[RMDB]
RNA sequence: GGGAACGACUCGAGUAGAGUCGAAAAGCUGAUACGAAGUGUGUCUCGUCAACUCCAAGGUUCUGGAUAGAACCGAUGGAGACGAUAAACGCGGUGUGUGUCCUAACGCAGGACAACACCAUACGUCGUUAGAACAAACUUUCGAGUUUGUUCUAACAAAAGAAACAACAACAACAAC
Reactivity to 2A3 in 0.01 (KOAc 150mM, MgCl2 10mM, bicine 150mM(pH8.5), 24C), signal-to-noise 9, nucleotides 027 to 126: g050c050u060g020a050u080a130c080g090a160a210g090u090g010u000g030u130c010u000c040g040u030c040a110a090c030u000c000c000a010a030g010g000u000u000c010u060g150g080a130u170a300g000a000a000c000c000g000a040u180g000g000a010g010a010c010g010a010u140a040a160a010c040g010c060g040g000u000g000u020g010u010g000u000c000c010u070a210a070c230g100c260a040g000g000a000c000a000a000c000a010c000c010a020u130a080c090g070u090c030
Reactivity to DMS in 0.01 (KOAc 150mM, MgCl2 10mM, bicine 150mM(pH8.5), 24C), signal-to-noise 7, nucleotides 027 to 126: g020c060u010g010a120u010a040c070g000a090a130g010u020g000u000g000u010c060u000c030g010u010c040a080a300c030u010c020c000a040a300g000g010u000u000c000u000g010g030a110u060a020g000a010a000c000c000g000a120u020g000g000a030g010a030c190g000a030u010a080a060a050c070g020c180g000g000u000g020u020g020u000g000u000c000c000u010a100a120c300g020c300a080g010g000a000c000a030a010c010a000c020c000a040u010a020c070g020u010c150
Structure probing data (2A3 and DMS) for a 177-nucleotide construct. For 2A3 the reverse transcriptase was SuperScript II with manganese. Reactivities are rounded to 0.1 and cut off at 0 and 3.